RNA sequence: GGGAACGACUCGAGUAGAGUCGAAAAUCGGCCAGCGCCUUGGCCAGCUCGGUCUUGCCGACACCGGUCGGGCCGAGGAACAUGAACGCCCCGGUGGGCCGGUUGGGGUCGGACACCCCGGCCCGGCGGUCAACUCUGUCUUCGGACAGAGUUGACCAAAAGAAACAACAACAACAAC
Reactivity to 2A3 in 0.01 (KOAc 150mM, MgCl2 10mM, bicine 150mM(pH8.5), 24C), signal-to-noise 2, nucleotides 027 to 126: u090c020g000g000c010c000a050g100c020g030c070c030u060u070g010g010c030c000a020g000c010u030c010g010g010u010c010u010u060g060c010c020g220a250c040a100c140c050g010g050u080c000g020g020g010c000c000g000a000g000g030a050a030c050a080u230g070a100a060c040g060c000c000c000c000g100g000u100g010g010g000c010c020g000g000u070u070g020g000g000g040u040c040g000g050a050c020a040c040c000c000c000g000g000c000c010c000g010g020c030
Reactivity to DMS in 0.01 (KOAc 150mM, MgCl2 10mM, bicine 150mM(pH8.5), 24C), signal-to-noise 2, nucleotides 027 to 126: u020c010g020g000c000c030a120g040c120g010c030c020u010u040g000g000c040c140a090g000c020u010c020g040g070u000c000u000u010g000c000c010g040a300c300a150c230c000g000g000u000c070g020g020g020c000c000g000a000g000g000a070a080c190a120u030g000a200a120c160g000c000c040c060c040g000g090u030g060g000g020c000c000g000g000u030u020g030g000g000g010u000c060g010g000a200c110a120c100c050c030c000g000g000c020c000c050g060g070c130
Background
Structure probing data (2A3 and DMS) for a 177-nucleotide construct. Conditions: 150 mM KOAc, 10 mM MgCl2 and 150 mM bicine (pH 8.5), 24 C. The 2A3 profile rests on 1,765 reads. Reactivities are rounded to 0.1 and cut off at 0 and 3.